[RMDB]
RNA sequence: GGGAACGACUCGAGUAGAGUCGAAAAACUGAAUCUGAUUAAGCCUCCAGAUCUAACUUCUAAUUUAAAGGAAAUUGGAAGGGUAGAGAAAAAAGUUAAUUACCACCAUGAGGAAACAUUUGGGAUAAUCCAGAAGGCAAGACAUUCUACAAGACCAAUACUAUCCCUCGUUCGCGAGGGAUAGUAUAAAAGAAACAACAACAACAAC
Reactivity to 2A3 in 0.01 (KOAc 150mM, MgCl2 10mM, bicine 150mM(pH8.5), 24C), signal-to-noise 1, nucleotides 027 to 156: a000c120u080g000a030a070u040c040u040g020a050u070u110a140a010g040c000c000u020c040c050a000g050a130u020c000u010a010a010c000u030u030c000u030a030a020u010u030u100a150a240a150g080g020a060a040a010u000u000g000g000a000a000g000g030g070u070a000g000a000g130a000a000a000a000a300a000g120u120u090a100a070u120u120a000c000c040a000c050c030a010u000g020a000g020g000a070a040a040c050a080u090u090u160g000g030g010a060u070a110a030u070c010c000a040g010a090a000g040g040c000a000a140g040a010c010a010u200u090c010u220a010c010a110a090g200a010c190c020a050